[RMDB]
RNA sequence: GGGAACGACUCGAGUAGAGUCGAAAAACCCCGGGGCACGAGGCCUCCACUGCGGCUGCGCCGCCUGCCGGCGCGCGUCCGACUUCUACUGCGGCUGCGCACGGUCGGCGCGCACACGCUCUUCUGCCAAUGGAAUAAGGUUCGCCUUAUUCCAUUGAAAAGAAACAACAACAACAAC
Reactivity to DMS in 0.01 (KOAc 150mM, MgCl2 10mM, bicine 150mM(pH8.5), 24C), signal-to-noise 4, nucleotides 027 to 126: a080c040c000c020c160g030g010g010g010c080a150c110g000a100g000g020c060c010u010c040c210a070c110u000g020c020g020g000c300u000g000c020g030c110c090g040c040c020u000g010c030c010g000g010c180g010c010g010c010g000u000c010c010g000a070c080u000u010c140u010a070c140u010g000c000g000g000c040u000g020c010g020c020a040c020g000g000u000c300g010g000c020g010c020g010c010a040c110a100c020g000c030u010c130u000u000c050u010g000c300
Reactivity to 2A3 in 0.01 (KOAc 150mM, MgCl2 10mM, bicine 150mM(pH8.5), 24C), signal-to-noise 4, nucleotides 027 to 126: a000c000c000c020c030g010g010g010g010c040a040c190g250a080g160g110c010c000u020c030c050a170c090u130g020c040g040g000c080u030g000c000g040c100c160g000c010c020u050g000c000c010g000g000c020g000c020g000c000g080u020c010c010g200a300c070u180u110c080u270a190c100u170g010c000g020g000c020u050g010c020g000c010a020c020g010g000u000c020g020g000c000g000c010g000c000a010c010a010c010g030c010u100c050u090u020c030u040g040c030